[RMDB]
RNA sequence: GGGAACGACUCGAGUAGAGUCGAAAACUUUGCGUCACCGUCGAUGUGUUCGUCGGAUCUCUCUGCAUUGCGGCGCGCGAGCGCGGAUGAAGAAGUCGGGUGCGGUGAUAAUGAGUAAGAGAGAGUGCACGUCGCUCGUGUUCGCACGAGCGACGUGAAAAGAAACAACAACAACAAC
Reactivity to 2A3 in 0.01 (KOAc 150mM, MgCl2 10mM, bicine 150mM(pH8.5), 24C), signal-to-noise 1, nucleotides 027 to 126: c030u090u040u140g000c040g000u000c000a000c000c000g130u210c040g050a030u030g220u060g090u300u080c020g010u070c000g070g000a140u010c060u000c000u020c030u190g110c080a130u080u130g300c050g080g000c030g030c000g000c080g000a030g000c130g040c000g000g000a040u060g070a050a040g190a080a080g000u030c000g030g110g000u200g020c000g010g000u000g000a030u080a000a060u060g020a000g040u040a180a000g000a000g040a010g020a010g070u080g000